[RMDB]
RNA sequence: GGGAACGACUCGAGUAGAGUCGAAAACAACGGUAAGCCAGUGGUAAUGUCAGUGCAAGAAGGAUAUUACCAUAGCACUGUCACGAGGGGAACGCAGUACCUUUUCAUCUAAACCUUUGCACGAGUAUAUCAUUUGGAGGUUCGCCUCCAAAUGAUAAAAAGAAACAACAACAACAAC
Reactivity to DMS in 0.01 (KOAc 150mM, MgCl2 10mM, bicine 150mM(pH8.5), 24C), signal-to-noise 3, nucleotides 027 to 126: c070a080a140c090g000g000u030a080a130g030c020c060a130g060u000g000g000u030a020a050u010g010u000c000a080g000u020g000c100a120a080g000a100a160g000g010a050u020a000u010u010a020c000c010a030u010a120g000c040a070c050u000g000u000c060a050c130g000a080g000g000g000g000a050a040c060g000c060a060g010u010a060c040c040u000u000u030u020c070a030u000c090u030a070a080a090c090c040u000u000u010g010c060a160c040g020a060g010u010a050
Reactivity to 2A3 in 0.01 (KOAc 150mM, MgCl2 10mM, bicine 150mM(pH8.5), 24C), signal-to-noise 7, nucleotides 027 to 126: c020a030a020c010g040g040u120a080a020g020c010c040a050g000u010g010g020u030a030a020u030g030u020c030a040g060u030g170c070a100a050g100a100a090g200g000a020u050a050u080u040a020c000c000a000u010a000g010c000a000c020u030g020u070c030a010c060g030a030g030g010g000g020a080a000c050g000c100a040g040u080a080c000c000u030u060u080u070c050a110u030c030u130a040a090a180c010c000u050u040u090g030c060a030c060g010a020g050u070a040